The data come from the RNA Mapping Database (RMDB), library TTRDES. Chemical mapping of a 177-nucleotide RNA with DMS and 2A3. The RNA was probed in 150 mM KOAc, 10 mM MgCl2 and 150 mM bicine (pH 8.5) at 24 C.
RNA sequence: GGGAACGACUCGAGUAGAGUCGAAAAGAUAUGGACAUGCUUGGGAGGUCCGUAUCGGAAACGAUACGAAGACCUUUGAUCAAGAGCAUGUCCUAAGUCAAAACCCAGUUCCCUUCGGGGAACUGGGCGUAUUGGACCAGUUCGCUGGUCCAAUACGAAAAGAAACAACAACAACAAC
Reactivity to DMS in 0.01 (KOAc 150mM, MgCl2 10mM, bicine 150mM(pH8.5), 24C), signal-to-noise 2, nucleotides 027 to 126: g000a000u000a060u010g010g000a020c000a000u000g000c000u000u000g010g010g020a010g030g030u000c000c010g000u010a000u000c010g010g000a010a030a020c000g010a010u000a010c000g010a160a170g000a010c000c000u000u000u030g000a060u010c060a050a120g000a120g010c020a010u000g000u000c000c000u000a000a050g000u010c000a110a080a170a280c000c000c000a020g000u000u010c000c000c000u010u010c220g030g000g020g000a000a010c000u010g000g000g010
Reactivity to 2A3 in 0.01 (KOAc 150mM, MgCl2 10mM, bicine 150mM(pH8.5), 24C), signal-to-noise 2, nucleotides 027 to 126: g010a000u030a000u050g000g010a000c000a000u000g000c010u030u010g010g070g040a100g010g010u000c010c010g000u000a000u030c000g020g000a000a010a000c010g010a010u010a010c020g100a300a090g010a020c000c000u110u220u160g090a110u050c030a040a040g030a040g150c000a000u000g000u000c000c000u000a000a000g010u010c010a000a020a070a160c000c000c000a000g010u000u020c020c020c020u020u040c300g090g000g010g000a000a010c000u010g000g000g010